[RMDB]
Conditions: 150 mM KOAc, 10 mM MgCl2 and 150 mM bicine (pH 8.5), 24 C. The record gives the reactivity of an RNA of 177 nucleotides to 2A3 and DMS. Reactivities are given for positions 27 through 126. The DMS profile rests on 5,364 reads. DMS adducts were read by reverse transcription with MarathonRT. It was measured as part of the RMDB library M2PK90. The 2A3 profile rests on 3,876 reads. In probing experiments dimethyl sulfate is read out at A N1 and C N3, which are open when not base-paired.
RNA sequence: GGGAACGACUCGAGUAGAGUCGAAAAGUAAAGCGCGAGGGCUGGUGAGGAUUUGGAGGCGUGAGAGAGAUUGUAGGGAUCCUGCCUCGUCCCUCUCCGCGCGGCGCCUCCUAGCCGAUAUAAAAAAGAAAUGCUUUCUAUUCGUAGAAAGCAUUUCAAAAGAAACAACAACAACAAC
Reactivity to 2A3 in 0.01 (KOAc 150mM, MgCl2 10mM, bicine 150mM(pH8.5), 24C), signal-to-noise 2, nucleotides 027 to 126: g050u070a030a120a050g110c100g010c060g070a150g060g030g110c020u040g000g090u230g040a040g030g020a050u080u130u240g160g030a050g000g060c000g000u140g010a070g000a000g000a000g010a030u090u260g090u210a020g010g000g040a050u070c020c040u090g130c010c000u000c010g010u010c010c000c000u000c020u000c010c000g030c000g000c020g080g000c000g020c000c000u010c000c000u000a010g000c020c010g000a020u020a010u050a100a050a010a000a010a000
Reactivity to DMS in 0.01 (KOAc 150mM, MgCl2 10mM, bicine 150mM(pH8.5), 24C), signal-to-noise 4, nucleotides 027 to 126: g000u010a060a090a110g010c060g010c080g010a080g010g010g050c020u000g020g000u010g010a040g010g010a070u000u020u010g020g020a100g020g000c000g020u010g000a030g010a040g010a010g010a030u000u010g050u020a030g010g000g010a110u010c130c130u000g000c000c010u000c020g000u000c010c010c000u000c020u000c010c120g000c030g010c050g010g010c080g010c010c020u000c000c010u010a020g020c010c010g000a080u010a060u020a000a040a050a080a080a090